[RMDB]
RNA sequence: GGGAACGACUCGAGUAGAGUCGAAAAUACGGAAACAUUACAUAAGGAAACUGCUGGAGUCAGCCUUCACUCAUCUUUAUGGACCCACUAUUAAACUAUUGUUAGGAGAACAUCAUCUCCUUGAAACGUAGUAUUCUGUUUUCGAACAGAAUACUACAAAAGAAACAACAACAACAAC
Reactivity to 2A3 in 0.01 (KOAc 150mM, MgCl2 10mM, bicine 150mM(pH8.5), 24C), signal-to-noise 4, nucleotides 027 to 126: u130a010c050g030g050a080a070a020c030a070u080u180a030c020a020u140a060a060g050g040a180a200a080c070u070g080c100u040g050g010a030g090u070c050a030g060c000c000u030u030c020a020c000u030c010a100u010c010u000u080u040a040u040g000g030a030c010c050c020a030c050u060a090u240u200a090a120a040c060u070a080u180u150g080u060u060a020g000g010a010g000a050a050c020a130u140c010a070u000c030u000c000c000u010u070g030a020a020a010c070
Reactivity to DMS in 0.01 (KOAc 150mM, MgCl2 10mM, bicine 150mM(pH8.5), 24C), signal-to-noise 4, nucleotides 027 to 126: u000a090c100g010g000a120a120a090c060a060u000u000a090c050a070u000a100a110g020g020a060a150a150c170u000g020c120u000g000g000a070g000u020c170a090g010c110c030u000u000c040a040c030u010c070a110u010c020u010u000u010a040u010g010g020a120c020c020c010a070c180u010a110u000u000a040a090a110c160u000a060u000u000g000u000u000a040g010g010a030g000a020a170c180a060u000c170a100u000c000u000c000c000u000u010g000a070a110a090c210
Structure probing data (2A3 and DMS) for a 177-nucleotide construct. For 2A3 the reverse transcriptase was SuperScript II with manganese. Conditions: 150 mM KOAc, 10 mM MgCl2 and 150 mM bicine (pH 8.5), 24 C. For DMS, 2,663 sequencing reads were counted.